[RMDB]
RNA sequence: GGGAACGACUCGAGUAGAGUCGAAAACGGCCGCGCGACGCGCCUGCGCGACAGGGCAGACGCGCGAGUGACGCCCCUCGAUCAGGUGCUCGGCGAAGCCUGGGGUGUACGCGAGAGCCUGAAGCACAGUCGUGGCGACUUUCGAGUCGCCACGACUAAAAGAAACAACAACAACAAC
Reactivity to 2A3 in 0.01 (KOAc 150mM, MgCl2 10mM, bicine 150mM(pH8.5), 24C), signal-to-noise 1, nucleotides 027 to 126: c000g000g000c000c000g000c000g000c000g000a080c040g040c080g160c030c000u000g000c230g000c090g070a130c020a030g000g010g050c040a020g000a110c030g000c060g020c000g010a090g020u010g000a090c020g040c000c000c020c040u060c030g270a300u080c050a000g060g020u050g040c000u040c040g280g000c000g060a120a030g000c000c060u220g000g000g000g000u120g010u090a130c000g000c000g000a020g000a000g100c000c090u050g050a010a030g090c090a120c000